[RMDB]
Source information
The record gives the reactivity of an RNA of 207 nucleotides to 2A3.
RNA sequence: GGGAACGACUCGAGUAGAGUCGAAAAGCUUACGCAAAAGUAGCGUAGGUUUAUCUCUGUUUUGGAGCCGAUCUUUUUGCCAUAUCUACUAACAAAAAAGGUCGUUAUUUCGUAGGUUGCGCUUUUUUGUGUCAUCAAAAAAGCAAAGAUAAGACUGGACCUACCACUAGUUCGCUAGUGGUAGGUCAAAAGAAACAACAACAACAAC
Reactivity to 2A3 in 0.01 (KOAc 150mM, MgCl2 10mM, bicine 150mM(pH8.5), 24C), signal-to-noise 1, nucleotides 027 to 156: g000c010u020u020a040c010g030c000a030a010a140a220g020u080a100g020c010g000u030a020g060g030u000u070u010a050u090c010u000c000u020g140u190u170u130u200g090g010a060g010c010c000g000a010u010c010u000u070u010u000u000g000c000c000a000u000a000u020c000u000a000c000u000a080a040c000a000a010a000a000a000a030g000g020u000c040g030u030u050a140u070u170u140c140g000u000a000g010g000u000u000g000c000g010c000u030u000u000u000u010u000g030u060g060u080c060a190u080c110a040a000a000a000a000a000g020c000a010a020a000g120a020u110a090a000g060a000c080u120g070
Overview: The 2A3 profile rests on 544 reads.